[RMDB]
The data come from the RNA Mapping Database (RMDB), library TTRDEL. The record gives the reactivity of an RNA of 177 nucleotides to DMS and 2A3.
RNA sequence: GGGAACGACUCGAGUAGAGUCGAAAAGAUAUGGAUGGAUUGGCCUUGGAUUUAGUCCCUAGUCGGAAACGACUAGAACCUUGUCAGGCUAAAUCCAUCCUAAGUCAAACACCUGUUCGCAGGUGAACCCAUUUAAGGGGUUCGCCCCUUAAAUGGGAAAAGAAACAACAACAACAAC
Reactivity to DMS in 0.01 (KOAc 150mM, MgCl2 10mM, bicine 150mM(pH8.5), 24C), signal-to-noise 6, nucleotides 027 to 126: g000a040u000a300u000g010g000a010u000g000g000a010u000u000g000g010c010c000u010u010g020g010a020u010u000u000a030g010u000c150c120c020u000a010g010u000c000g020g010a090a120a180c010g010a010c000u000a010g000a080a070c090c080u010u000g000u000c030a030g000g010c000u000a020a010a010u000c000c000a000u000c000c000u000a020a060g000u000c030a120a130a220c020a010c000c010u000g020u000u010c220g030c000a010g000g010u000g000a070a130
Reactivity to 2A3 in 0.01 (KOAc 150mM, MgCl2 10mM, bicine 150mM(pH8.5), 24C), signal-to-noise 7, nucleotides 027 to 126: g030a030u080a040u150g020g010a000u000g000g000a000u000u010g010g020c020c020u050u200g210g010a080u290u240u270a030g030u060c070c020c000u000a000g010u000c010g010g030a070a060a100c010g000a000c000u000a000g000a010a010c010c040u020u060g060u060c030a000g020g000c000u080a290a090a010u000c000c000a000u000c000c000u000a010a000g010u000c030a030a110a080c010a000c010c000u010g030u070u100c300g030c100a000g000g000u010g040a040a050
DMS adducts were read by reverse transcription with MarathonRT.